[RMDB]
RNA sequence: GGGAACGACUCGAGUAGAGUCGAAAAGAUAUGGAGGGAGGCCGAUAAGUAGUGUAUCGGAAACGAUACCUACUUUUGACGGCUUAACUCCUAAGUCAAAAGUAUCGGCUGUUCGCAGCCGAUACAACAUACUGACUAUGUUCGCAUAGUCAGUAUGAAAAGAAACAACAACAACAAC
Reactivity to 2A3 in 0.01 (KOAc 150mM, MgCl2 10mM, bicine 150mM(pH8.5), 24C), signal-to-noise 7, nucleotides 027 to 126: g020a020u070a030u110g000g000a010g000g020g010a030g030g000c010c020g060a120u080a180a000g010u010a010g030u040g010u300a000u000c010g030g000a070a020a010c010g000a000u000a000c000c000u010a000c010u020u010u030u050g060a020c010g000g000c000u000u010a000a000c000u000c000c000u000a030a000g020u010c030a040a010a040a170g000u000a000u000c000g000g000c010u020g080u080u120c300g010c160a000g000c000c000g000a000u000a000c000a000a000
Reactivity to DMS in 0.01 (KOAc 150mM, MgCl2 10mM, bicine 150mM(pH8.5), 24C), signal-to-noise 9, nucleotides 027 to 126: g010a030u000a300u000g000g000a020g010g000g010a080g000g010c000c000g020a140u000a020a010g010u000a010g010u010g020u000a000u000c000g010g000a070a080a140c000g010a010u000a000c000c000u000a000c000u000u000u000u000g010a200c120g000g000c000u000u000a090a100c000u000c000c000u000a020a090g000u000c020a080a090a130a140g000u000a000u000c000g000g000c000u000g010u000u010c210g020c000a010g010c010c000g000a000u000a000c000a070a180
The data come from the RNA Mapping Database (RMDB), library TTRDEL. Structure probing data (2A3 and DMS) for a 177-nucleotide construct. The reactions ran in a buffer of 150 mM KOAc, 10 mM MgCl2 and 150 mM bicine (pH 8.5), at 24 C. For 2A3 the reverse transcriptase was SuperScript II with manganese. For DMS, 26,620 sequencing reads were counted.